[RMDB]
RNA sequence: GGGAACGACUCGAGUAGAGUCGAAAAAACGCGCAGGUCAAUGGCCACCUUUGAUAAGUCGGUCGCCGAUUCUCACACGAUCGCCAACGAGAACCGCGAUACGCUCACCGAGCUGCGCAGCUCGGUCACAUUGUUGCCCCCUGGCAACGUGUACACAUGGAGUAUGACUAUUCGUAGUCAUACUCCAAAAAGAAACAACAACAACAAC
Reactivity to 2A3 in 0.01 (KOAc 150mM, MgCl2 10mM, bicine 150mM(pH8.5), 24C), signal-to-noise 1, nucleotides 027 to 156: a030a000c100g010c020g000c000a000g000g070u090c050a190a110u110g030g020c050c040a020c000c040u000u000u090g170a170u170a130a000g070u130c010g010g000u020c020g020c040c000g020a080u010u010c000u050c010a100c020a040c120g090a160u190c040g010c040c020a070a020c100g020a000g010a100a000c020c030g000c040g000a050u110a150c030g010c040u040c040a030c000c010g000a000g070c020u040g050c230g000c010a010g000c000u000c010g010g000u020c000a000c000a000u120u300g000u010u000g010c020c000c000c000c040u040g000g000c000a000a000c000g010u010g000u040a020c000a000c000a080
Reactivity to DMS in 0.01 (KOAc 150mM, MgCl2 10mM, bicine 150mM(pH8.5), 24C), signal-to-noise 1, nucleotides 027 to 156: a040a020c060g030c030g040c050a040g140g020u010c010a080a150u010g010g030c020c020a040c040c020u010u010u000g040a190u000a040a090g000u000c040g090g000u010c030g030c060c000g000a060u020u000c030u000c060a140c180a090c090g000a100u020c070g040c020c050a060a210c090g020a040g010a080a020c050c000g000c010g010a080u000a070c090g020c050u010c040a130c000c000g000a030g060c010u000g030c000g030c060a100g000c000u020c030g020g030u000c040a070c030a060u000u010g030u000u010g000c000c010c060c090c060u010g030g010c000a030a020c040g000u010g030u000a080c050a110c030a210
An RNA of 207 nucleotides, treated with 2A3 and DMS and read out base by base. In probing experiments dimethyl sulfate is read out at A N1 and C N3, which are open when not base-paired. The RNA was probed in 150 mM KOAc, 10 mM MgCl2 and 150 mM bicine (pH 8.5) at 24 C.